An RNA of 207 nucleotides, treated with 2A3 and read out base by base. The reactions ran in a buffer of 150 mM KOAc, 10 mM MgCl2 and 150 mM bicine (pH 8.5), at 24 C. For 2A3, 391 sequencing reads were counted. For 2A3 the reverse transcriptase was SuperScript II with manganese. The data come from the RNA Mapping Database (RMDB), library M2RFPK.

[RMDB]
RNA sequence: GGGAACGACUCGAGUAGAGUCGAAAAUUCUAGUUUUUUUUCGUUUUUCAGUAGAUUUUCGCCUUCAAAGGAAUAAAUUCCAUUAAGAAAAGGUAAAAAGAACAAUCUAUUCACUGAACUUACUGAUGCCACGUCCUCAAGUUCGCUUGAGGACGAAGCGCUUAUAUUACUUCGGUAAUAUAAGCGCAAAAGAAACAACAACAACAAC
Reactivity to 2A3 in 0.01 (KOAc 150mM, MgCl2 10mM, bicine 150mM(pH8.5), 24C), signal-to-noise 1, nucleotides 027 to 156: u120u050c050u070a080g000u080u000u000u000u000u000u020u160c030g000u090u000u000u000u110c030a030g000u010a020g050a000u060u000u000u020c010g000c000c000u000u000c030a150a170a000g040g010a030a020u200a070a130a060u100u030c000c060a040u100u190a190a030g070a140a190a000a020g000g000u070a170a100a060a050a000g000a010a050c050a030a010u000c000u080a040u230u210c150a110c080u040g080a090a000c040u050u120a040c000u150g050a030u130g090c080c020a080c040g070u010c000c000u010c000a030a000g000u030u090c230g040c080u000u000g000a010g000g000a000c010g000a000a010